[RMDB]
RNA sequence: GGGAACGACUCGAGUAGAGUCGAAAAAGUCUAUAGAGGCGUGAUCAGUGUGGGCGCUUGGGGCAAGUUCCUUGGAAGAGGACAGCAUGGAGGGUGAUACUCCCGUUCAUCCCUGAGUUGCUCGUGCGUAUCAUAACUUCUUCGGAAGUUAUGAUACAAAAGAAACAACAACAACAAC
Reactivity to DMS in 0.01 (KOAc 150mM, MgCl2 10mM, bicine 150mM(pH8.5), 24C), signal-to-noise 5, nucleotides 027 to 126: a120g010u000c020u000a080u000a170g000a020g000g010c010g020u000g000a120u010c030a190g030u000g020u010g010g010g000c010g000c020u000u000g010g010g000g010c300a050a070g010u010u000c000c000u000u010g020g050a300a080g000a030g000g000a030c030a070g000c110a140u000g020g010a120g000g000g000u000g010a130u000a100c090u010c010c000c040g000u000u000c060a160u000c010c000c010u000g000a030g010u000u010g030c010u000c020g010u000g000c150
Reactivity to 2A3 in 0.01 (KOAc 150mM, MgCl2 10mM, bicine 150mM(pH8.5), 24C), signal-to-noise 3, nucleotides 027 to 126: a000g050u040c030u030a140u060a110g080a040g040g040c030g050u040g050a060u080c050a050g010u020g000u050g070g010g020c010g000c010u020u010g010g000g020g000c030a050a040g040u140u050c000c000u010u020g060g030a070a030g000a020g040g000a010c010a000g020c040a050u110g030g000a020g030g000g000u030g020a040u080a100c020u010c000c000c000g020u030u000c030a080u130c000c000c010u000g020a040g010u060u300g130c000u000c020g020u010g000c030
Structure probing data (DMS and 2A3) for a 177-nucleotide construct. It was measured as part of the RMDB library RFMREP. For DMS, 5,565 sequencing reads were counted. 2A3 adducts were read by reverse transcription with SuperScript II with manganese. The RNA was probed in 150 mM KOAc, 10 mM MgCl2 and 150 mM bicine (pH 8.5) at 24 C.